[RMDB]
RNA sequence: GGGAACGACUCGAGUAGAGUCGAAAAGUGGUUUCGCUGUUCGUGGCGGGAGCGCGCUACGAGCUGGGAAGAGCUCGACGGCUCUGGCCGGCGGGUGCGAGGGGCACGGUGUGCGCCUACCUGCUCGGCGCGGGACUGCUGCUGUGGACGGUCCUCCUAGAUCUCGUGUAUUCGUACACGAGAUCUAAAAAGAAACAACAACAACAAC
Reactivity to 2A3 in 0.01 (KOAc 150mM, MgCl2 10mM, bicine 150mM(pH8.5), 24C), signal-to-noise 2, nucleotides 027 to 156: g170u100g020g010u030u010u000c030g000c030u020g000u010u040c030g040u060g000g010c020g010g040g010a010g080c020g010c010g000c060u090a070c070g000a020g000c020u040g030g000g000a080a060g010a080g000c000u000c000g040a020c020g010g010c030u080c200u300g100g050c010c000g000g000c000g000g000g000u070g020c100g120a060g000g020g020g000c020a000c150g140g070u270g010u010g060c060g200c000c010u020a040c010c000u000g030c000u000c010g010g010c010g000c010g010g020g040a080c030u100g000c000u010g010c000u030g080u040g010g030a020c000g000g010u040c010c000u020c010c010